[RMDB]
RNA sequence: GGGAACGACUCGAGUAGAGUCGAAAACUGUAGGAUCUUCCUUGGUAGCAACUAUGACAGAUAUUACAGAAGUUAAUGGUUUGCCUCCACAUUAUGUUUGCCCUGGAUGUAAGUACAAUGAAUUUAUAACAGAUGGAUCUGUGUCUUCAGGAGCGGAUCACUGAUCACCAUUCGUGGUGAUCAGUGAAAAAGAAACAACAACAACAAC
Reactivity to 2A3 in 0.01 (KOAc 150mM, MgCl2 10mM, bicine 150mM(pH8.5), 24C), signal-to-noise 3, nucleotides 027 to 156: c050u040g070u160a050g020g130a100u020c060u070u040c020c010u030u020g000g000u020a000g040c000a000a080c030u030a020u050g040a000c020a000g160a100u070a040u240u240a060c020a040g180a230a060g180u020u060a150a030u020g010g010u010u040u060g000c000c000u030c020c000a040c000a080u020u230a130u220g090u020u180u110g030c000c000c000u040g010g010a040u080g040u090a040a120g040u050a070c080a010a110u160g080a060a030u040u160u040a110u050a070a050c020a050g110a110u150g090g020a050u070c000u010g020u040g030u020c010u040u000c000a010g020g030a060g000c040g050g020a010
Reactivity to DMS in 0.01 (KOAc 150mM, MgCl2 10mM, bicine 150mM(pH8.5), 24C), signal-to-noise 2, nucleotides 027 to 156: c040u000g040u000a040g030g010a110u020c060u020u000c030c000u000u020g000g050u010a060g020c020a040a040c050u000a070u000g060a050c040a110g070a240u010a080u000u000a250c120a190g000a150a220g020u000u000a020a090u010g020g000u000u010u030g050c000c000u020c000c030a080c110a060u000u000a030u010g030u000u000u000g010c020c020c040u000g030g040a040u010g010u010a040a050g000u000a070c040a090a130u010g010a060a110u000u000u000a130u010a060a140c060a060g010a120u010g010g010a070u000c020u010g030u020g000u010c060u000u000c030a110g040g010a170g000c030g000g020a210